Structure probing data (2A3 and DMS) for a 177-nucleotide construct.
The 2A3 profile rests on 952 reads.
2A3 adducts were read by reverse transcription with SuperScript II with manganese.
The reactions ran in a buffer of 150 mM KOAc, 10 mM MgCl2 and 150 mM bicine (pH 8.5), at 24 C.
For DMS, 1,276 sequencing reads were counted.

RNA sequence: GGGAACGACUCGAGUAGAGUCGAAAAUACAAGGGGACGACUGUUAAAGUUGAUUUUGAUAACAGCAAGACAGUAGUAUCCACUGACAAAUGGGAAAUGGACCAUGCCACUCUGACCAGGCUCCUAAGAGCCAGUGUACGUUCGCGUACACUGGCUCAAAAGAAACAACAACAACAAC
Reactivity to 2A3 in 0.01 (KOAc 150mM, MgCl2 10mM, bicine 150mM(pH8.5), 24C), signal-to-noise 2, nucleotides 027 to 126: u250a120c080a050a000g040g030g000g000a000c010g010a040c050u000g000u020u010a040a150a140g030u020u020g060a130u000u060u130u240g300a190u100a170a000c070a010g010c010a040a040g070a000c000a000g050u020a000g000u010a150u110c000c000a070c040u000g090a010c010a020a100a040u090g070g000g040a050a060a140u120g040g000a000c010c010a030u040g040c010c010a020c010u030c010u000g000a000c000c000a000g020g000c020u000c010c040u130a090a010
Reactivity to DMS in 0.01 (KOAc 150mM, MgCl2 10mM, bicine 150mM(pH8.5), 24C), signal-to-noise 2, nucleotides 027 to 126: u010a040c020a160a020g000g030g000g000a070c120g000a040c000u030g020u000u000a000a290a190g000u000u010g100a120u000u010u050u000g010a200u000a090a260c050a000g000c070a000a300g000a010c010a000g040u000a040g040u000a180u040c020c000a050c070u000g000a090c210a040a130a040u000g010g040g000a020a100a080u000g020g010a030c020c040a040u010g030c070c070a090c130u000c030u000g000a100c040c030a010g000g000c040u010c000c050u040a000a270